[RMDB]
RNA sequence: GGGAACGACUCGAGUAGAGUCGAAAACAGGAUGCCCGGGCGACGCUGCUCACACCGAGCCCGAAGUGGAGUCCUGGUUUCGGGGACCCUUCCGCACUCCGAGCUUUGCACCUCACCCGGCCUCGUCCCCUCAAAAAGUGUUCGCACUUUUUGAGGGAAAAGAAACAACAACAACAAC
Reactivity to 2A3 in 0.01 (KOAc 150mM, MgCl2 10mM, bicine 150mM(pH8.5), 24C), signal-to-noise 1, nucleotides 027 to 126: c050a010g100g000a030u070g050c040c060c070g000g000g000c020g040a110c050g000c080u080g000c000u000c050a110c040a040c000c040g030a020g030c000c050c030g050a090a010g070u170g020g060a070g070u000c000c020u040g080g000u070u090u130c050g000g030g010g050a040c040c010c000u090u070c040c030g020c010a040c020u020c020c040g000a020g020c000u160u090u120g010c000a050c000c030u020c030a020c020c000c000g050g000c050c020u050c010g050u060c000
Reactivity to DMS in 0.01 (KOAc 150mM, MgCl2 10mM, bicine 150mM(pH8.5), 24C), signal-to-noise 1, nucleotides 027 to 126: c080a080g010g020a050u010g010c110c010c020g050g010g020c000g010a140c150g030c100u000g000c020u000c150a100c150a120c120c120g020a240g000c030c060c040g000a070a110g000u010g010g010a110g020u000c000c010u000g000g000u000u000u000c060g000g000g000g000a110c010c060c060u010u000c040c070g010c110a090c020u000c020c030g000a060g010c020u020u000u010g000c050a070c060c030u010c000a060c020c010c000g000g020c040c040u020c020g000u010c020